[RMDB]
RNA sequence: GGGAACGACUCGAGUAGAGUCGAAAAACACUCAGGCUCUUCCUGGCUUUUCUGCCUCAGCCACCAUAAACUGUGGUUGCUUCUCCAGCUCUGUUACAGUUCAGACUUGAGGGGAGGUGACAAGAGCUAACAUGUUACCAUGGGGAGCCUGGCUGAAUGAGUAUCGAUUAUUCGUAAUCGAUACUCAAAAAGAAACAACAACAACAAC
Reactivity to 2A3 in 0.01 (KOAc 150mM, MgCl2 10mM, bicine 150mM(pH8.5), 24C), signal-to-noise 5, nucleotides 027 to 156: a000c040a010c040u090c000a000g000g000c000u010c010u180u130c020c030u010g010g010c000u080u030u030u020c080u140g020c000c000u020c020a010g000c020c030a000c000c010a050u160a110a300a110c140u220g010u020g020g000u020u010g010c010u110u110c000u000c010c020a030g020c120u000c010u030g090u080u150a180c090a160g030u070u070c000a000g000a020c010u020u030g010a010g040g040g040g010a020g030g000u020g020a030c050a080a030g010a010g050c010u030a040a020c030a090u140g040u130u140a060c060c040a040u060g000g010g000g000a000g000c020c000u000g010g000c020u040g020a100a100
Reactivity to DMS in 0.01 (KOAc 150mM, MgCl2 10mM, bicine 150mM(pH8.5), 24C), signal-to-noise 2, nucleotides 027 to 156: a070c050a070c050u000c020a070g030g020c000u000c030u000u000c010c040u000g030g030c000u000u000u000u000c120u000g030c010c060u000c040a080g030c030c020a090c030c120a160u000a140a080a090c050u000g050u000g030g020u000u000g010c030u010u000c010u020c010c000a110g020c050u010c020u020g020u010u000a140c100a150g000u000u000c020a030g030a070c040u000u010g000a240g000g010g020g030a090g010g040u050g020a030c050a060a080g020a090g030c030u000a060a080c100a090u000g000u010u000a070c030c010a150u010g010g000g020g000a070g000c000c010u000g010g020c030u000g000a070a180

An RNA of 207 nucleotides, treated with 2A3 and DMS and read out base by base. Values cover nucleotides 27 to 156. For 2A3 the reverse transcriptase was SuperScript II with manganese. For DMS, 5,566 sequencing reads were counted.